[RMDB]
RNA sequence: GGGAACGACUCGAGUAGAGUCGAAAAAGGCCAAUAGCGGAUAUCACUCUCAUGCUGGAGUGCAGAGAGUGAGAAACGUUCCGGCGCUGUAGGAUGUGGCUGCGGCCGAUUAGGUAGAUGGUGGGGUCUUACCAAGAGGUUUCGACCUCUUGGUAAGAAAAGAAACAACAACAACAAC
Reactivity to DMS in 0.01 (KOAc 150mM, MgCl2 10mM, bicine 150mM(pH8.5), 24C), signal-to-noise 3, nucleotides 027 to 126: a070g010g000c010c020a130a140u040a050g010c000g020g010a060u010a140u000c000a010c000u010c000u000c010a110u010g000c000u000g010g020a170g040u030g030c000a050g000a040g000a020g020u000g000a010g000a070a060a120c030g010u010u000c200c090g000g000c030g010c050u010g000u010a070g000g000a040u000g020u010g010g030c030u000g000c110g000g000c050c010g000a080u020u010a070g010g010u000a030g010a060u010g000g020u000g000g000g000g030u020
Reactivity to 2A3 in 0.01 (KOAc 150mM, MgCl2 10mM, bicine 150mM(pH8.5), 24C), signal-to-noise 6, nucleotides 027 to 126: a000g080g000c070c010a120a060u160a100g010c020g010g000a020u040a010u130c000a000c000u000c000u010c040a300u060g010c030u100g140g200a240g080u170g020c010a000g000a000g000a010g010u010g000a000g000a000a070a010c030g010u050u020c020c010g030g000c030g010c060u050g020u060a060g020g110a090u070g070u080g070g010c020u020g000c040g030g000c000c000g010a010u030u110a030g000g050u030a010g010a090u050g020g030u060g020g000g000g020u000

Structure probing data (DMS and 2A3) for a 177-nucleotide construct. For 2A3 the reverse transcriptase was SuperScript II with manganese. Source: RMDB libraries RFM100 and RFMREP, as collected in RNAgym. The reactions ran in a buffer of 150 mM KOAc, 10 mM MgCl2 and 150 mM bicine (pH 8.5), at 24 C. For DMS the reverse transcriptase was MarathonRT.